[RMDB]
RNA sequence: GGGAACGACUCGAGUAGAGUCGAAAAGAGACGCUGACGGAAACCCCGGGAACAAGGAAACAGGAGGAGGAUCGGUAGAAAAGAGCGAGACCUCCGAUUCGAGAGCUCCUGGACUCCUCAGCUCUGGCUCUGUUAUAGAGUUCGCUCUAUAACAGAGAAAAGAAACAACAACAACAAC
Reactivity to DMS in 0.01 (KOAc 150mM, MgCl2 10mM, bicine 150mM(pH8.5), 24C), signal-to-noise 2, nucleotides 027 to 126: g020a130g000a080c220g040c000u000g010a020c140g000g000a060a090a120c200c230c000c010g040g000g000a020a070c030a130a120g030g000a060a060a170c100a150g010g010a100g010g010a040g000g010a300u000c020g000g000u010a050g010a090a110a090a120g010a120g060c020g030a060g000a160c020c010u000c000c010g000a160u000u000c030g000a140g000a250g000c010u010c000c000u000g010g040a100c060u000c000c000u000c010a000g000c030u000c010u000g000g000